[RMDB]
RNA sequence: GGGAACGACUCGAGUAGAGUCGAAAACCGAGAGGAGACGAGAAAGAGGAGGAUCUCCCUUUGCCAUCCGAGGGAACUACGUUCUCCUUCGGAUGCCCAGGUCGGACCGCGAGGAGGUGGAGAUACCGAUACGAUUGUGGUUCGCCACAAUCGUAUCAAAAGAAACAACAACAACAAC
Reactivity to 2A3 in 0.01 (KOAc 150mM, MgCl2 10mM, bicine 150mM(pH8.5), 24C), signal-to-noise 2, nucleotides 027 to 126: c010c000g020a030g010a010g050g020a020g000a030c070g010a020g030a110a060a010g080a050g020g020a000g000g030a030u000c000u030c030c000c000u040u030u110g060c020c000a000u000c000c000g000a000g020g000g020a000a020c070u170a090c280g110u150u040c050u020c020c030u000u020c000g000g000a010u000g000c000c000c000a040g010g010u060c040g030g030a050c020c010g010c020g040a020g000g010a010g000g030u070g010g020a030g010a050u110a090c010c060
Reactivity to DMS in 0.01 (KOAc 150mM, MgCl2 10mM, bicine 150mM(pH8.5), 24C), signal-to-noise 3, nucleotides 027 to 126: c020c000g000a100g020a100g010g010a050g010a050c090g010a070g010a050a040a090g010a070g020g000a100g010g000a080u000c050u000c020c020c050u000u000u010g010c170c030a000u000c010c000g000a030g020g020g020a040a070c060u000a130c270g010u010u000c070u000c000c020u000u000c000g010g010a030u000g000c020c030c090a070g000g000u010c080g000g010a060c020c050g010c120g000a100g000g010a040g000g010u000g000g010a040g000a110u030a080c170c050
About this RNA: An RNA of 177 nucleotides, treated with 2A3 and DMS and read out base by base. Conditions: 150 mM KOAc, 10 mM MgCl2 and 150 mM bicine (pH 8.5), 24 C. For DMS, 1,958 sequencing reads were counted. For DMS the reverse transcriptase was MarathonRT. The 2A3 profile rests on 2,624 reads. 2A3 adducts were read by reverse transcription with SuperScript II with manganese.